[RMDB]
RNA sequence: GGGAACGACUCGAGUAGAGUCGAAAAAUUGUACUAGGUUUUGACCACAUAAUCACAUACUUGCGUAUAACUGGUGGACUAUCCUCCACCUGGCCAUUGGACUCGUUGGCCAAACGCAGGGCCAACAACCCUACGGACCAUUCGUGGUCCGUAGGGUAAAAGAAACAACAACAACAAC
Reactivity to DMS in 0.01 (KOAc 150mM, MgCl2 10mM, bicine 150mM(pH8.5), 24C), signal-to-noise 1, nucleotides 027 to 126: a000u010u000g000u000a060c200u000a000g000g120u000u000u000u000g000a060c080c030a040c140a030u000a050a020u000c210a090c010a040u020a080c030u000u000g000c050g080u000a070u070a050a070c200u000g000g000u000g000g000a010c090u030a140u090c240c170u000c040c000a000c050c000u000g000g000c000c040a050u050u010g020g000a080c010u000c120g090u000u000g000g000c010c000a080a050a000c020g000c040a000g040g000g000c000c030a000a010c070a190
Reactivity to 2A3 in 0.01 (KOAc 150mM, MgCl2 10mM, bicine 150mM(pH8.5), 24C), signal-to-noise 3, nucleotides 027 to 126: a000u120u100g100u110a060c120u120a130g030g100u160u130u070u120g180a100c020c060a120c020a060u160a180a060u110c080a090c060a100u210a050c020u040u040g050c010g000u100a070u050a300a140c120u060g000g010u010g000g000a010c040u090a170u150c020c020u010c000c050a000c020c000u030g060g000c040c000a130u070u140g010g060a120c030u050c110g040u010u010g010g000c000c000a050a000a000c020g000c010a000g020g000g000c000c000a020a040c000a000